[RMDB]
RNA sequence: GGGAACGACUCGAGUAGAGUCGAAAAUAACUCUGGUAGUGCUGCCACCUUACCCAUCAAAGCUUUACGCGGUGCUGGGUAGUUCGGCUUAGACAUCUUUUCAUUCUCGGAUACGUGGUGUAGGACGAUGAAUGCCGAUUCGUACUCUCGUGCCAUGCUACGGCACUUGAUUCGUCAAGUGCCGUAGAAAAGAAACAACAACAACAAC
Reactivity to 2A3 in 0.01 (KOAc 150mM, MgCl2 10mM, bicine 150mM(pH8.5), 24C), signal-to-noise 1, nucleotides 027 to 156: u110a000a020c040u020c060u140g000g050u060a060g050u040g080c040u050g000c000c010a020c000c000u010u090a040c000c010c010a030u010c020a030a050a010g040c020u180u300u280a110c220g000c020g000g030u060g000c000u020g000g000g000u000a010g000u020u050c040g020g000c000u040u020a050g040a020c000a040u000c030u080u070u120u090c010a030u070u040c030u020c040g070g050a180u110a150c020g030u080g050g030u100g070u090a050g000g130a060c060g020a020u080g070a140a040u070g070c030c010g030a070u000u050c020g040u020a060c030u000c000u010c020g030u020g040c040c060a080u110g050
Conditions: 150 mM KOAc, 10 mM MgCl2 and 150 mM bicine (pH 8.5), 24 C. Structure probing data (2A3) for a 207-nucleotide construct. The 2A3 profile rests on 769 reads. Values are in units of 0.01, from 0 to 300, in steps of 10. It was measured as part of the RMDB library OK3TST.